Description
Chemical mapping of a 207-nucleotide RNA with 2A3.
RNA sequence: GGGAACGACUCGAGUAGAGUCGAAAAAGGUGCAUGCCGAGGUGCGGUAGGCCUCGUUAACAAACCGCAAAAAAAUAGUCGCAAACGACGAAAACUACGCACUCGCAGCUUAAUAACCUGCGCUGACAAAACCCGACUACCUUCGGGUAGUCGGGAACCUAUGGAGCUUGUUCGCAAGCUCCAUAGGAAAAGAAACAACAACAACAAC
Reactivity to 2A3 in 0.01 (KOAc 150mM, MgCl2 10mM, bicine 150mM(pH8.5), 24C), signal-to-noise 1, nucleotides 027 to 156: a000g010g010u030g020c040a050u070g050c060c030g000a020g000g010u020g030c020g000g010u050a040g050g040c000c010u000c020g180u090u070a020a010c010a020a030a000c020c000g000c000a010a110a000a070a000a000a100u160a050g000u010c020g000c120a160a240a190c060g060a000c010g020a020a070a020a020c000u080a030c110g030c080a010c010u020c000g000c000a010g000c000u000u010a050a020u000a100a110c000c030u000g000c000g000c160u090g020a010c020a030a040a000a000c010c000c000g000a000c000u020a000c000c000u030u010c150g080g020g000u000a000g010u000c000g000g000g010a000a000